[RMDB]
RNA sequence: GGGAACGACUCGAGUAGAGUCGAAAAAGCGGAUCGUACGCGAUCCGCAACCCGUGAUGGCAUGAAUCUUUGAGACCUGAGAAUUUUCUUCCUUGAUGAAAAUCACAAGCAUGAUCCCUGAGGGCAACCACCGGAUUGCAUUCGUGCAAUCCGGUGGAAAAGAAACAACAACAACAAC
Reactivity to 2A3 in 0.01 (KOAc 150mM, MgCl2 10mM, bicine 150mM(pH8.5), 24C), signal-to-noise 2, nucleotides 027 to 126: a000g020c010g060g010a010u010c000g000u000a040c270g010c020g110a000u000c020c000g010c000a030a030c000c000c000g000u040g010a090u040g080g020c050a040u070g080a190a030u070c070u150u000u020g070a040g010a060c030c060u020g020a070g000a270a100u020u020u050u020c040u030u000c000c070u110u120g020a030u010g110a060a100a060a160u090c010a000c080a010a070g070c020a020u100g050a080u120c050c050c060u070g050a080g000g060g040c060a040a010